[RMDB]
RNA sequence: GGGAACGACUCGAGUAGAGUCGAAAAACUUUGGCCGACGCUGCUAGGCGGGUGCGCACUGCUGUCUGGCCCGGCGCCGCGCUAGGGCGCACGUUUCGCUCUGCGGAGGGUAACCGGGCUGAAAUAAAUGAAUUAUCUCAUUCGUGAGAUAAUUCAUAAAAGAAACAACAACAACAAC
Reactivity to 2A3 in 0.01 (KOAc 150mM, MgCl2 10mM, bicine 150mM(pH8.5), 24C), signal-to-noise 3, nucleotides 027 to 126: a000c040u110u060u060g060g000c030c000g010a020c050g040c080u090g020c040u050a060g030g010c030g010g040g030u090g020c040g030c020a050c060u080g030c020u050g040u160c080u070g010g000c000c000c000g000g000c030g000c020c010g000c000g020c090u170a020g000g020g000c020g040c060a040c080g040u050u180u180c000g000c020u000c000u000g020c010g020g060a180g070g000g060u030a080a090c010c000g010g020g000c010u010g010a030a040a030u140a010a170
Reactivity to DMS in 0.01 (KOAc 150mM, MgCl2 10mM, bicine 150mM(pH8.5), 24C), signal-to-noise 6, nucleotides 027 to 126: a100c070u010u000u010g010g010c020c020g020a090c090g020c040u000g000c090u010a090g020g010c050g010g010g010u000g000c050g010c040a070c050u000g000c050u010g010u000c060u010g010g000c010c010c010g010g010c270g010c010c000g000c030g000c050u000a020g010g010g010c000g020c130a040c200g010u000u010u010c010g010c010u000c000u000g000c010g000g000a130g010g000g020u000a090a130c020c020g000g010g020c010u000g000a040a060a060u010a050a110